[RMDB]
RNA sequence: GGGAACGACUCGAGUAGAGUCGAAAAGAUGAUUUUGCCGCCUUUGCUCCAUUGGCUGAUGUGAUUAUUCUGGCUGUGCCCAUCAAGCAGACCAUAGCAUUUAUCAAGGAUCUAGCGGAGCUGGACCACCAGCCCAUACGUUCGCGUAUGGGCUGGUAAAAGAAACAACAACAACAAC
Reactivity to DMS in 0.01 (KOAc 150mM, MgCl2 10mM, bicine 150mM(pH8.5), 24C), signal-to-noise 1, nucleotides 027 to 126: g000a050u000g000a080u000u000u010u000g040c000c080g000c030c060u010u010u000g000c080u000c000c040a030u010u000g000g000c130u000g000a120u120g020u000g030a040u000u030a050u000u010c090u000g000g050c080u000g000u010g000c130c020c000a040u080c150a000a060g000c020a090g040a070c070c040a000u000a150g080c100a080u000u000u060a140u000c130a080a080g000g000a110u000c000u000a060g010c010g100g000a110g000c030u010g000g000a130c130c020
Reactivity to 2A3 in 0.01 (KOAc 150mM, MgCl2 10mM, bicine 150mM(pH8.5), 24C), signal-to-noise 3, nucleotides 027 to 126: g060a070u300g100a130u120u230u100u060g090c020c000g030c060c000u100u040u110g000c020u050c050c050a060u040u030g110g000c070u050g000a090u130g030u030g040a120u020u210a040u170u000c030u030g040g000c030u010g030u060g080c020c020c000a040u150c030a000a030g060c050a040g030a090c000c000a060u060a050g030c040a050u050u170u000a090u060c050a020a150g030g020a050u030c030u030a010g000c000g090g010a020g000c000u010g000g020a050c010c000